Description:
An RNA of 177 nucleotides, treated with DMS and 2A3 and read out base by base. Reactivities are rounded to 0.1 and cut off at 0 and 3.

RNA sequence: GGGAACGACUCGAGUAGAGUCGAAAAGAUAUGGAAUCGAUACCAGUGAGGCGUUUAUGUCGGAAACGACAUGACGCUCUGGUCGAUUCCUAAGUCAAACACGUGCGACCUUCGGGUCGCACGUGAACGAAGUUGUAUUCUUCGGAAUACAACUUCGAAAAGAAACAACAACAACAAC
Reactivity to DMS in 0.01 (KOAc 150mM, MgCl2 10mM, bicine 150mM(pH8.5), 24C), signal-to-noise 2, nucleotides 027 to 126: g020a050u000a300u010g010g000a040a010u000c000g010a140u010a090c020c010a020g000u030g010a140g040g010c000g020u010u000u020a010u000g010u000c000g010g000a090a060a190c010g020a010c000a000u000g020a010c000g030c000u000c000u020g000g000u000c000g000a020u000u000c000c000u010a000a080g010u000c030a170a230a180c010a000c000g070u010g000c000g000a030c000c000u010u010c260g020g020g040u000c010g020c010a000c010g000u010g000a020a150
Reactivity to 2A3 in 0.01 (KOAc 150mM, MgCl2 10mM, bicine 150mM(pH8.5), 24C), signal-to-noise 2, nucleotides 027 to 126: g020a010u040a040u100g000g030a020a000u010c000g020a050u160a300c020c000a030g040u150g300a280g170g080c070g000u030u160u250a010u000g000u000c010g000g000a040a070a020c010g000a010c000a010u020g000a000c000g020c040u010c000u010g000g000u020c010g010a020u010u000c000c000u000a060a000g060u030c030a090a130a030c020a000c030g050u040g000c000g000a000c030c000u140u210c300g110g000g010u020c000g100c020a000c020g020u000g010a000a000